[RMDB]
RNA sequence: GGGAACGACUCGAGUAGAGUCGAAAAGGGGGACUCAGCUACGGUUUUGAGUACCACAAAUGGGGGUCAUAACUUGGGGGGUGGCCACAGAAAAAAGGAAAACCAUCUUGUGGAGUCUCAAAAGAGGAUGCUAAAUGCGUUUCGACGCAUUUAGCAUAAAAGAAACAACAACAACAAC
Reactivity to 2A3 in 0.01 (KOAc 150mM, MgCl2 10mM, bicine 150mM(pH8.5), 24C), signal-to-noise 1, nucleotides 027 to 126: g080g040g000g000g030a030c030u010c050a010g020c020u180a080c120g100g010u000u130u060u090g010a000g040u140a040c000c000a000c000a010a030a000u010g000g020g010g000g020u010c040a010u080a210a040c030u080u000g070g000g010g010g000g000u000g000g000c020c000a050c030a000g140a100a150a050a000a060a000g050g050a020a020a020a020c020c000a000u000c110u140u050g000u000g020g020a080g030u030c020u000c070a020a070a000a000g120a030g020g030
Reactivity to DMS in 0.01 (KOAc 150mM, MgCl2 10mM, bicine 150mM(pH8.5), 24C), signal-to-noise 1, nucleotides 027 to 126: g000g070g010g020g000a020c050u010c020a140g010c000u020a060c300g020g000u000u000u000u000g000a010g050u060a150c080c000a060c070a080a070a110u030g010g000g010g000g000u020c060a040u020a060a080c090u010u010g000g000g000g000g070g070u010g000g040c000c000a000c050a010g000a000a020a150a040a100a060g000g020a080a010a020a020c000c000a050u000c090u000u000g000u000g010g000a280g020u050c020u000c010a020a030a030a000g040a050g000g000
Description:
Structure probing data (2A3 and DMS) for a 177-nucleotide construct. For 2A3 the reverse transcriptase was SuperScript II with manganese. Conditions: 150 mM KOAc, 10 mM MgCl2 and 150 mM bicine (pH 8.5), 24 C. For 2A3, 754 sequencing reads were counted. The DMS profile rests on 1,366 reads.